Notes
The record gives the reactivity of an RNA of 177 nucleotides to DMS and 2A3. For 2A3 the reverse transcriptase was SuperScript II with manganese. DMS adducts were read by reverse transcription with MarathonRT. It was measured as part of the RMDB library M2PK50. Reactivities are given for positions 27 through 126. The 2A3 profile rests on 1,480 reads.
RNA sequence: GGGAACGACUCGAGUAGAGUCGAAAAGGAGCUUGAUUCGUCAAGCUCCAAAAGUUACAGACGCGAUUCCUAGGGUAAACAAGAAGCUAUGCACCGAGGCAAAAAGGAAUGGAUUCGUCCAUUCCAACCAAGAACAACACUUCGGUGUUGUUCUUGGAAAAGAAACAACAACAACAAC
Reactivity to DMS in 0.01 (KOAc 150mM, MgCl2 10mM, bicine 150mM(pH8.5), 24C), signal-to-noise 1, nucleotides 027 to 126: g020g010a000g000c000u000u000g010a020u000u010c220g000u000c000a020a020g000c000u000c000c000a000a000a030a020g000u030u000a110c080a070g010a060c080g000c040g010a070u010u000c010c000u000a070g000g010g000u000a050a130a040c090a070a060g000a050a060g010c040u000a040u000g010c060a040c020c010g000a050g000g000c160a000a080a020a080a080g010g000a000a000u000g000g000a030u010u010c220g010u000c000c000a020u000u000c010c010a050a140
Reactivity to 2A3 in 0.01 (KOAc 150mM, MgCl2 10mM, bicine 150mM(pH8.5), 24C), signal-to-noise 1, nucleotides 027 to 126: g010g000a020g020c010u040u000g000a000u010u020c060g050u020c120a000a000g000c000u000c000c000a000a010a030a020g010u000u080a050c030a030g070a030c020g030c040g060a060u010u040c000c000u020a070g030g060g000u130a160a130a030c050a060a070g100a050a030g020c020u030a020u150g050c010a010c040c020g020a040g100g000c070a020a070a020a050a020g000g000a000a000u010g000g000a030u040u080c170g030u000c050c000a020u000u000c000c000a020a010